Conditions: 150 mM KOAc, 10 mM MgCl2 and 150 mM bicine (pH 8.5), 24 C. Structure probing data (2A3) for a 207-nucleotide construct.
[RMDB]
RNA sequence: GGGAACGACUCGAGUAGAGUCGAAAACUGAGAGUGAAUAUUUAAAAAGCAUUUGUGGAAAGCCGCUUAGCAAUGCUUACCAAGAGCUUUGCAAAUGUUAUGUAUACCUUGACCUAGAUAUUCCACUUCCAAUGACCUGUCCAAUAAAAUAAUACAAGUGCACUCAUACUUUCGAGUAUGAGUGCACAAAAGAAACAACAACAACAAC
Reactivity to 2A3 in 0.01 (KOAc 150mM, MgCl2 10mM, bicine 150mM(pH8.5), 24C), signal-to-noise 1, nucleotides 027 to 156: c070u080g040a030g010a050g130u090g030a010a090u070a210u150u240u200a100a110a000a000a000g000c000a000u000u000u080g040u030g060g080a030a000a000g000c000c070g030c090u020u070a070g000c050a010a230u110g000c000u030u030a050c030c030a030a030g040a000g040c000u000u080u000g000c050a000a030a000u000g010u050u100a030u150g080u030a120u070a080c030c010u020u050g080a110c000c000u010a000g000a010u000a030u020u010c000c000a050c070u010u000c050c010a000a240u130g040a090c010c000u010g040u030c040c000a010a010u200a010a020a050a090u300a070a110u300a040c070a260a000